[RMDB]
RNA sequence: GGGAACGACUCGAGUAGAGUCGAAAACAUUGUUUCCACAUUACUUGUGGAUUCUACUACUAAAGCCAGAGAUUCUAUGCAAGGGAAAAGAUGGUCUUAGCCCUACUGGUGUAAGGCAAUUCCUGAAAUGAGAAAUGAAGUUCGCUUCAUUUCUCAUAAAAGAAACAACAACAACAAC
Reactivity to 2A3 in 0.01 (KOAc 150mM, MgCl2 10mM, bicine 150mM(pH8.5), 24C), signal-to-noise 6, nucleotides 027 to 126: c050a050u100u150g010u020u010u010c020c000a000c000a030u170u290a160c150u080u050g000u020g020g010a000u000u020c030u090a140c010u000a010c000u050a160a080a010g020c010c010a010g010a020g020a160u170u050c060u160a100u250g040c050a050a050g040g010g010a030a090a000a020g080a050u220g110g070u000c010u040u050a040g000c020c000c000u050a110c030u040g060g000u070g020u050a010a000g000g030c030a040a060u050u040c010c000u010g030a190a160
Reactivity to DMS in 0.01 (KOAc 150mM, MgCl2 10mM, bicine 150mM(pH8.5), 24C), signal-to-noise 6, nucleotides 027 to 126: c160a110u000u010g010u000u000u000c000c000a040c050a050u010u010a150c250u000u000g020u000g000g000a020u000u000c010u000a100c100u010a100c100u010a050a100a240g020c060c030a030g010a150g000a080u000u010c050u000a060u010g010c120a080a050g000g010g010a040a030a040a050g010a250u010g010g020u000c030u000u000a070g010c020c010c080u000a100c050u000g000g020u010g010u000a090a060g000g010c080a070a130u000u000c010c000u010g010a060a070